About this RNA
This 207-nucleotide RNA was probed chemically with DMS and 2A3. For 2A3, 924 sequencing reads were counted. For 2A3 the reverse transcriptase was SuperScript II with manganese. The DMS profile rests on 1,942 reads. The data come from the RNA Mapping Database (RMDB), library ARCHII.
RNA sequence: GGGAACGACUCGAGUAGAGUCGAAAAUGAGGCCGUAUUUUUGCGAAGUCUGCCCAAAGCACGUAGUGUUUGAAGAUUUCGGUCCUAUGCAAUAUGAACCCAUGAACCAUGUCAGGUCCUGACGGAAGCAGCAUUAAGUGGAUCAUCAUAUGUGCCGGCGUGAAAAAAACUUCGGUUUUUUUCACGCAAAAGAAACAACAACAACAAC
Reactivity to DMS in 0.01 (KOAc 150mM, MgCl2 10mM, bicine 150mM(pH8.5), 24C), signal-to-noise 1, nucleotides 027 to 156: u000g040a050g020g020c010c010g020u010a040u010u010u000u020u020g000c000g000a020a110g010u000c030u000g100c090c030c070a080a140a070g020c040a030c040g030u000a140g010u010g010u000u000u000g010a050a120g020a230u010u000u010c040g020g000u000c040c030u020a080u000g030c040a090a030u010a050u000g010a070a210c010c000c060a040u000g010a070a140c040c090a190u040g030u010c100a150g010g040u000c000c020u000g010a150c090g000g020a030a100g020c040a170g010c070a070u000u010a120a210g010u000g020g010a060u000c050a150u000c020a040u000a020u000g020u000g010c030c080g040
Reactivity to 2A3 in 0.01 (KOAc 150mM, MgCl2 10mM, bicine 150mM(pH8.5), 24C), signal-to-noise 2, nucleotides 027 to 156: u130g020a070g030g050c010c000g030u040a210u060u180u020u070u110g060c030g040a040a000g030u000c020u040g040c030c020c000a060a010a010g040c050a040c070g260u210a080g020u030g020u000u010u130g050a060a040g020a070u040u060u040c060g010g020u060c010c010u060a050u170g000c010a000a050u020a010u100g010a010a030c000c000c000a030u040g010a010a020c070c040a030u030g080u090c000a010g000g000u020c000c040u130g090a070c140g010g000a010a010g020c020a000g000c020a010u020u050a080a000g010u010g000g010a010u000c020a020u020c000a010u010a020u080g100u080g000c030c050g040